The data come from the RNA Mapping Database (RMDB), library 15KLIB. An RNA of 170 nucleotides, treated with DMS and 2A3 and read out base by base. 2A3 is a SHAPE reagent: it acylates the 2'-hydroxyl of flexible nucleotides of all four kinds. The reactions ran in a buffer of 150 mM KOAc, 10 mM MgCl2 and 150 mM bicine (pH 8.5), at 24 C. The 2A3 profile rests on 4,568 reads. 2A3 adducts were read by reverse transcription with SuperScript II with manganese. For DMS the reverse transcriptase was MarathonRT. For DMS, 13,872 sequencing reads were counted.
RNA sequence: GGGAACGACUCGAGUAGAGUCGAAAAUUCUAACUUUGCGUUAGCAUUGUGCAGUGGUGUAAUGUGGUUGUACACUUAUAGCAUUGGAGAAGCCUCAAGCCCCAUUGCCUAUCUGGUUUUUGUCACUACACCACCCAGUUCGCUGGGUGGAAAAGAAACAACAACAACAAC
Reactivity to DMS in 0.01 (KOAc 150mM, MgCl2 10mM, bicine 150mM(pH8.5), 24C), signal-to-noise 5, nucleotides 027 to 129: u000u000c020u020a080a110c050u020u020u030g000c060g010u060u020a000g040c000a030u070u020g020u020g040c160a110g040u020g030g000u020g030u030a020a070u030g030u020g020g050u010u050g000u040a110c020a190c040u060u000a070u020a050g030c000a060u040u020g000g000a120g030a170a070g010c020c150u080c220a120a230g020c020c050c020c070a030u060u010g010c170c030u000a000u010c070u050g040g020u020u000u030u060u020g050u000c050a000c050u030a060c140a100
Reactivity to 2A3 in 0.01 (KOAc 150mM, MgCl2 10mM, bicine 150mM(pH8.5), 24C), signal-to-noise 4, nucleotides 027 to 129: u060u040c000u050a050a120c000u060u070u300g000c060g030u030u050a010g000c000a050u040u040g020u040g040c010a000g010u000g040g000u020g050u060a030a140u170g030u040g020g000u000u080g060u040a020c020a000c010u030u040a070u030a030g000c010a010u000u010g040g000a250g020a230a050g010c020c010u120c050a000a000g020c060c000c000c000a000u020u010g020c000c020u030a080u080c070u050g040g070u050u030u000u120u190g020u030c020a000c040u040a000c000a030